[RMDB]
RNA sequence: GGGAACGACUCGAGUAGAGUCGAAAAGGGUAACCCCACCUUUGGCAAGGCCUACUGUCAGAUUAAAUCUGAACUACUACAAAUGAACAGAUACUUAGUCCAGCUCGACUUCAUCUCCUUUAUAAAAACAUGGAUUACUCUUCGGAGUAAUCCAUGUAAAAGAAACAACAACAACAAC
Reactivity to 2A3 in 0.01 (KOAc 150mM, MgCl2 10mM, bicine 150mM(pH8.5), 24C), signal-to-noise 8, nucleotides 027 to 126: g080g010g020u100a080a120c000c000c000c000a020c010c000u020u050u060g070g030c050a070a040g060g020c010c020u030a070c040u070g040u030c020a010g010a060u110u140a080a080a090u020c010u010g020a040a030c020u070a030c010u060a060c090a100a130a110u150g030a080a020c010a030g040a040u060a080c030u050u060a030g010u000c020c010a030g010c020u010c030g070a070c020u060u020c020a060u030c030u040c010c010u060u150u050a220u060a090a090a010a010
Reactivity to DMS in 0.01 (KOAc 150mM, MgCl2 10mM, bicine 150mM(pH8.5), 24C), signal-to-noise 3, nucleotides 027 to 126: g000g030g010u020a050a110c080c010c000c050a150c030c000u000u010u010g050g000c050a090a100g010g020c020c040u000a110c060u010g000u010c050a080g000a060u000u000a040a010a220u030c000u000g000a080a120c050u000a080c130u020a130c190a030a100a060u020g000a070a140c070a100g000a060u040a040c090u000u000a080g030u010c010c010a020g000c010u000c030g010a070c010u000u010c050a030u080c040u000c010c020u000u030u000a060u050a040a060a070a120
Background: The record gives the reactivity of an RNA of 177 nucleotides to 2A3 and DMS. For DMS the reverse transcriptase was MarathonRT. For 2A3 the reverse transcriptase was SuperScript II with manganese. Values cover nucleotides 27 to 126.